[RMDB]
RNA sequence: GGGAACGACUCGAGUAGAGUCGAAAAGGAAAUAAUGCACAUAAUCCAGUCGCAGACGCUAAAAAUAACGCUGCGUCGCGACGGAUGUGGCAACGCAGACCGAAGUGCAAACGGUAGCGUAAAAAAACUUGUUAGUCAGAUUCGUCUGACUAACAAGAAAAGAAACAACAACAACAAC
Reactivity to DMS in 0.01 (KOAc 150mM, MgCl2 10mM, bicine 150mM(pH8.5), 24C), signal-to-noise 3, nucleotides 027 to 126: g000g010a110a050a100u020a060a100u000g010c000a100c010a050u000a150a070u010c000c000a100g030u000c010g010c010a120g040a020c000g010c010u000a000a100a070a090a080u000a080a100c210g010c150u010g010c000g030u000c000g000c000g000a010c010g000g000a000u000g020u000g000g010c020a100a030c010g020c000a060g010a080c000c000g020a070a080g030u010g020c160a060a080a100c020g000g000u000a090g020c030g010u000a000a000a050a030a060a020a100
Reactivity to 2A3 in 0.01 (KOAc 150mM, MgCl2 10mM, bicine 150mM(pH8.5), 24C), signal-to-noise 4, nucleotides 027 to 126: g100g050a070a070a000u220a050a060u130g040c070a070c000a260u240a230a090u130c020c030a040g010u000c000g000c070a100g000a010c010g000c040u090a120a030a020a100a150u230a190a060c110g040c170u060g000c010g000u000c000g000c000g000a000c010g000g010a000u000g010u000g000g000c000a000a010c000g000c010a010g090a050c000c010g030a070a050g210u250g140c000a060a110a050c000g000g000u030a020g000c010g020u090a120a020a010a000a000a010a030

Description:
Structure probing data (DMS and 2A3) for a 177-nucleotide construct. The reactions ran in a buffer of 150 mM KOAc, 10 mM MgCl2 and 150 mM bicine (pH 8.5), at 24 C.